[RMDB]
RNA sequence: GGGAACGACUCGAGUAGAGUCGAAAAGAUAUGGAUCCACUCAGCUUUUGACGCUCCAAGGGUCGGAAACGACCUCAAUGAGCGAUAAGCUGGUGGAUCCUAAGUCAAAGCGAGCUUCGGCUCGCAACACUAACUGCGACUUCGGUCGCAGUUAGUGAAAAGAAACAACAACAACAAC
Reactivity to DMS in 0.01 (KOAc 150mM, MgCl2 10mM, bicine 150mM(pH8.5), 24C), signal-to-noise 1, nucleotides 027 to 126: g010a040u000a300u000g000g000a050u010c000c000a000c000u000c010a010g020c000u000u000u030u050g050a130c050g020c000u030c000c220a300a280g020g010g030u000c000g020g000a010a030a100c000g020a000c000c000u000c200a070a190u030g000a020g030c030g030a040u000a000a010g000c000u020g000g000u000g000g000a020u000c010c000u020a000a050g000u000c020a130a070a280g000c010g010a040g000c010u000u010c240g010g000c000u010c000g070c000a030a050
Reactivity to 2A3 in 0.01 (KOAc 150mM, MgCl2 10mM, bicine 150mM(pH8.5), 24C), signal-to-noise 1, nucleotides 027 to 126: g030a000u030a040u150g000g000a000u030c050c010a020c010u300c040a010g030c030u090u160u270u300g300a160c080g010c010u040c000c040a120a170g060g000g070u010c020g000g000a020a030a000c030g040a010c000c020u080c020a040a140u300g010a000g010c010g030a040u090a100a000g000c010u010g000g000u000g020g010a000u050c000c000u000a000a000g010u000c030a130a170a040g000c010g000a000g010c000u030u140c280g110g000c000u050c010g000c020a040a000